[RMDB]
RNA sequence: GGGAACGACUCGAGUAGAGUCGAAAACCUUGAGGUAGUUGGGUACACUAGGAGGACUGCCGCUGCUAAAGCGGAGGAAGGAACGGGCAACGGUAGGUCAGUAUGCCCCGAAUGGACCGGGCAACACGAUAACCAUAAUCUUCGGAUUAUGGUUAUCAAAAGAAACAACAACAACAAC
Reactivity to 2A3 in 0.01 (KOAc 150mM, MgCl2 10mM, bicine 150mM(pH8.5), 24C), signal-to-noise 3, nucleotides 027 to 126: c000c000u000u100g070a050g020g030u080a040g030u140u120g060g000g010u060a030c040a040c040u040a040g040g010a020g000g050a020c020u020g000c000c000g000c020u050g000c050u290a210a070a020g020c030g040g010a010g000g030a030a020g020g010a090a030c050g000g010g020c020a030a020c020g010g040u060a020g010g060u020c020a020g030u060a080u090g050c040c000c000c000g050a050a090u170g030g050a040c040c000g000g010g010c010a050a010c040a000c100
Reactivity to DMS in 0.01 (KOAc 150mM, MgCl2 10mM, bicine 150mM(pH8.5), 24C), signal-to-noise 6, nucleotides 027 to 126: c020c000u000u010g020a090g010g000u000a040g020u000u010g010g000g010u000a070c070a070c090u000a100g000g020a070g010g010a080c040u010g010c000c010g010c010u000g000c250u010a060a070a040g020c010g000g000a040g000g000a080a040g000g000a080a110c140g000g000g010c060a040a060c100g010g020u000a050g010g010u010c070a070g010u010a080u000g000c050c010c010c040g010a080a100u010g010g000a080c060c060g000g000g010c030a040a040c130a080c160